[RMDB]
Structure probing data (2A3 and DMS) for a 177-nucleotide construct. The DMS profile rests on 2,284 reads. The data come from the RNA Mapping Database (RMDB), library RFM100.

RNA sequence: GGGAACGACUCGAGUAGAGUCGAAAAUGUAGAAUAUUUGAUUUUAGUCCCUCAAAAUGAGGACUAAAAUGAAUAUUAUAGGGACCAAUUUCAAUAUGAAAUGAUUUUACAAGGAUUAAAACAAAAUAAUGAAUAAUCAUUUCGAUGAUUAUUCAUUAAAAGAAACAACAACAACAAC
Reactivity to 2A3 in 0.01 (KOAc 150mM, MgCl2 10mM, bicine 150mM(pH8.5), 24C), signal-to-noise 2, nucleotides 027 to 126: u140g030u060a040g030a070a020u010a020u000u000u070g080a010u010u000u020u000a020g010u040c040c100c000u030c020a200a260a040a040u270g010a030g000g000a000c000u010a000a000a000a000u010g010a020a000u020a000u010u000a010u050a020g020g050g010a010c000c020a000a010u000u010u010c030a030a020u020a040u100g010a000a020a040u060g020a030u040u020u050u050a040c020a020a000g020g000a040u000u040a060a020a040a000c000a000a050a000a020u080
Reactivity to DMS in 0.01 (KOAc 150mM, MgCl2 10mM, bicine 150mM(pH8.5), 24C), signal-to-noise 1, nucleotides 027 to 126: u020g000u030a220g000a110a010u000a020u000u010u010g000a040u010u000u000u000a000g000u000c060c000c040u000c020a060a040a110a140u020g000a040g000g000a050c000u000a000a010a020a000u000g000a130a020u000a000u010u000a000u020a020g000g000g020a070c020c010a030a040u000u000u000c020a030a020u010a020u000g000a030a000a020u010g000a060u000u010u010u030a020c060a000a030g030g000a050u010u000a010a020a020a020c030a020a010a030a080u000
Reactivities are given for positions 27 through 126.